[RMDB]
RNA sequence: GGGAACGACUCGAGUAGAGUCGAAAAUUUCAGGUUAUCUGACAAAGGCAGCUUUGAUUGGGACAUGGAGGCAUGGGCAGGUUCUCCUUUCUUUGGAAACACAUCCAUGCUGGGAUGCACAGUUCUUUUCCUAAGGAUUGUGUUUACUCCUGACUGCUCAACUAGAAUCGUUCGCGAUUCUAGUUGAAAAAGAAACAACAACAACAAC
Reactivity to DMS in 0.01 (KOAc 150mM, MgCl2 10mM, bicine 150mM(pH8.5), 24C), signal-to-noise 1, nucleotides 027 to 156: u000u000u000c030a060g020g020u000u010a080u000c020u000g000a070c130a060a090a070g020g050c030a040g030c040u000u000u000g010a200u000u000g020g050g020a120c080a090u020g010g000a180g020g010c060a050u000g000g000g040c120a100g010g020u000u000c040u000c030c010u000u010u000c010u000u000u000g000g000a050a090a030c090a060c050a150u000c000c010a020u000g020c000u000g000g000g000a080u010g040c030a030c020a020g040u010u000c010u000u000u000u030c100c070u020a120a050g030g010a030u000u010g020u000g000u000u010u000a030c110u000c000c000u000g000a120c040u000g020c080
Reactivity to 2A3 in 0.01 (KOAc 150mM, MgCl2 10mM, bicine 150mM(pH8.5), 24C), signal-to-noise 2, nucleotides 027 to 156: u090u060u020c020a010g000g010u170u180a090u140c000u050g000a010c060a020a140a050g050g010c030a010g020c090u110u130u130g100a160u110u140g100g010g020a040c050a090u080g040g040a030g020g000c000a000u010g000g000g000c070a040g000g090u000u040c070u080c090c000u110u240u210c130u110u180u110g000g000a000a020a000c050a000c000a060u000c000c000a000u000g020c000u020g010g000g040a010u050g000c000a000c000a040g000u000u010c000u010u080u070u110c020c070u070a030a020g000g000a010u010u020g000u000g030u060u040u050a080c030u010c000c010u050g070a120c030u040g020c030
Source information
An RNA of 207 nucleotides, treated with DMS and 2A3 and read out base by base. Source: RMDB library OK3TST, as collected in RNAgym. DMS adducts were read by reverse transcription with MarathonRT. The 2A3 profile rests on 1,249 reads.